[RMDB]
RNA sequence: GGGAACGACUCGAGUAGAGUCGAAAAGAUAUGGAAUGCUCUUUUGACGCUCGGGAGUGUCGGAAACGACACAGAGCGAUAAGAGCGUUCCUAAGUCAAAACGAAGCUGACUUCGGUCAGCUUCGAACUGAGAAAAUCUGUUCGCAGAUUUUCUCAGAAAAGAAACAACAACAACAAC
Reactivity to DMS in 0.01 (KOAc 150mM, MgCl2 10mM, bicine 150mM(pH8.5), 24C), signal-to-noise 3, nucleotides 027 to 126: g000a030u000a300u010g000g000a010a000u000g000c000u000c000u010u000u010u010g030a190c060g000c000u000c000g020g010g020a120g010u000g020u010c010g020g000a100a080a200c000g010a020c000a000c000a050g000a010g000c000g010a090u000a000a010g000a010g010c000g040u000u000c000c000u000a010a120g010u010c020a060a070a110a200c020g010a020a010g010c000u010g010a020c000u010u010c250g020g010u000c000a000g000c010u000u000c010g010a020a100
Reactivity to 2A3 in 0.01 (KOAc 150mM, MgCl2 10mM, bicine 150mM(pH8.5), 24C), signal-to-noise 2, nucleotides 027 to 126: g020a010u090a040u150g000g010a000a000u010g010c000u000c000u060u090u130u120g260a170c070g020c010u010c000g180g050g120a300g050u020g020u000c010g000g010a070a070a020c010g010a000c000a000c000a010g010a000g000c010g010a010u030a000a000g010a000g000c000g010u000u000c000c000u010a040a030g000u010c020a020a020a070a120c000g000a000a010g000c000u020g030a020c000u080u060c270g060g000u000c000a000g000c030u000u010c000g000a000a000
The record gives the reactivity of an RNA of 177 nucleotides to DMS and 2A3. For 2A3 the reverse transcriptase was SuperScript II with manganese. DMS adducts were read by reverse transcription with MarathonRT. Conditions: 150 mM KOAc, 10 mM MgCl2 and 150 mM bicine (pH 8.5), 24 C. For 2A3, 2,621 sequencing reads were counted.